[RMDB]
RNA sequence: GGGAACGACUCGAGUAGAGUCGAAAAGUACACGGGGGCACCUUUGGCAUCGUGGACCCCGAAUUCGGCUAUGACAUUGGGUUUUUCGUCUUCGAUCUGCCGUUCUACCGGUCGGUGCUGAACUGGCUCGAUGUGAGACUUUCGAGUCUCACAUCGAAAAAGAAACAACAACAACAAC
Reactivity to 2A3 in 0.01 (KOAc 150mM, MgCl2 10mM, bicine 150mM(pH8.5), 24C), signal-to-noise 3, nucleotides 027 to 126: g070u110a050c100a030c060g030g020g040g000g000c050a120c030c000u040u070u200g060g000c030a080u050c080g030u020g070g150a200c000c010c000c060g010a010a020u050u040c010g000g010c000u060a080u190g020a030c050a170u040u100g000g010g020u070u050u040u050u120c060g030u030c050u070u050c060g080a110u020c040u070g000c000c000g020u040u000c010u090a050c020c000g030g060u080c050g000g050u050g040c040u040g010a100a120c010u050g010g000c010
Reactivity to DMS in 0.01 (KOAc 150mM, MgCl2 10mM, bicine 150mM(pH8.5), 24C), signal-to-noise 2, nucleotides 027 to 126: g040u010a000c250a260c030g010g030g010g000g020c130a080c110c090u000u020u000g050g000c110a070u000c140g020u000g000g000a130c020c000c000c010g000a070a050u030u020c010g020g030c050u000a080u070g000a050c110a160u010u010g000g000g010u000u000u020u020u020c030g030u000c030u030u040c040g040a070u000c090u000g030c040c020g000u000u020c030u000a010c030c000g000g000u020c050g020g020u020g000c050u000g010a080a100c000u000g000g000c130